[RMDB]
RNA sequence: GGGAACGACUCGAGUAGAGUCGAAAAUCAAGCCGCCCCAGUCGUAAAAAAUGGCCUUCCAGCUCAUCGACGCAACAGCCUCAAUCCAUUGCCGACCACCAGCAGGCUGGCGCCCAUGUCGGCGAACACGGCCAUCCACAUCGUGGCCUGGCCAGUGCCUAGUAACUAUCUUCGGAUAGUUACUAGGAAAAGAAACAACAACAACAAC
Reactivity to DMS in 0.01 (KOAc 150mM, MgCl2 10mM, bicine 150mM(pH8.5), 24C), signal-to-noise 1, nucleotides 027 to 156: u000c030a060a120g020c000c000g040c010c030c010c000a130g000u000c060g030u060a030a030a070a080a050a130u000g000g000c040c030u010u000c030c020a050g020c030u000c040a130u010c000g040a080c070g020c020a060a060c050a090g000c000c010u000c020a020a070u000c020c120a160u000u010g030c040c060g000a040c030c070a120c060c000a140g000c040a070g010g000c020u000g020g000c050g000c060c030c020a080u000g000u000c010g010g020c000g000a000a130c050a100c010g010g000c020c000a070u030c040c010a070c100a190u000c140g000u000g020g030c050c060u010g030g040c010c020a100g000u000g000
Reactivity to 2A3 in 0.01 (KOAc 150mM, MgCl2 10mM, bicine 150mM(pH8.5), 24C), signal-to-noise 3, nucleotides 027 to 156: u130c040a020a040g010c010c000g040c000c020c000c020a050g030u050c030g070u150a070a030a020a030a030a070u090g040g000c010c020u040u020c020c010a020g000c030u050c070a070u070c050g030a050c050g010c070a050a070c010a090g040c000c010u050c040a040a090u020c080c000a050u110u170g030c000c020g030a050c020c020a020c020c010a040g050c010a030g040g000c010u010g020g000c020g050c030c030c010a020u150g040u040c010g000g000c000g010a040a000c000a030c020g010g040c010c000a010u020c000c000a050c030a190u220c240g030u040g000g010c000c030u010g000g010c000c020a040g010u010g040